[RMDB]
RNA sequence: GGGAACGACUCGAGUAGAGUCGAAAACGCGCUCCUGGAGCGACUCGAGCGCCUGGUCGACCUCGUCGGUGACCGACGAGACGAUCAUUUUCAGCGUCGAGUACUUCACCCACUCGUCGCGGUCGGCACAGUGGGUCAACUUCGGUUGACCCACUGUAAAAGAAACAACAACAACAAC
Reactivity to 2A3 in 0.01 (KOAc 150mM, MgCl2 10mM, bicine 150mM(pH8.5), 24C), signal-to-noise 1, nucleotides 027 to 126: c010g010c000g000c000u000c010c110u100g110g110a100g030c090g080a100c040u000c010g040a040g030c010g000c000c000u020g000g000u030c010g010a170c000c010u050c000g000u020c030g040g130u250g190a240c160c000g010a000c010g000a010g020a010c000g000a000u020c020a050u100u150u040u090c100a030g000c000g010u000c000g000a000g010u020a040c000u050u120c020a110c010c020c000a040c000u040c030g010u000c000g000c030g070g020u130c020g110g030c050
Reactivity to DMS in 0.01 (KOAc 150mM, MgCl2 10mM, bicine 150mM(pH8.5), 24C), signal-to-noise 1, nucleotides 027 to 126: c110g010c020g010c030u000c010c130u000g020g000a140g040c040g020a100c010u000c020g000a040g000c000g000c000c170u000g020g000u030c000g010a130c150c000u000c000g020u000c010g010g000u010g000a170c120c000g020a000c010g010a040g010a080c010g010a000u010c030a110u010u010u000u000c150a130g000c030g030u000c000g040a030g000u010a030c040u000u000c100a100c180c100c080a090c000u010c030g000u000c020g040c000g030g010u000c020g000g000c180